[RMDB]
RNA sequence: GGGAACGACUCGAGUAGAGUCGAAAAAGCAGUGAUACGUCACUGCACGAGGAUAAUAGGGGGCCACAGCAGAAGCGUUAACGUCGCGGCCCCUGUCAGAUUCUGGUGAAUCUGCGAAUUCUGCGAAAAAACUGUUAGUCGUUCGCGACUAACAGAACCUAACCAUUCCGUUCGCGGAAUGGUUAGGAAAAGAAACAACAACAACAAC
Reactivity to 2A3 in 0.01 (KOAc 150mM, MgCl2 10mM, bicine 150mM(pH8.5), 24C), signal-to-noise 3, nucleotides 027 to 156: a010g000c000a000g000u010g020a020u050a080c220g060u000c010a000c040u010g000c010a010c030g060a060g200g010a100u110a180a030u130a170g000g020g000g000g000c000c000a030c010a070g000c010a000g000a020a000g000c000g010u020u100a080a020c060g070u050c000g070c000g000g000c000c000c000c000u000g000u040c000a010g010a010u030u000c010u230g200g020u280g110a000a000u000c010u000g000c020g000a000a010u020u000c000u000g000c000g030a090a020a030a010a020a000c000u020g000u000u000a010g010u010c030g010u020u030c150g000c010g150a000c000u000a000a000c000a000g000a000a000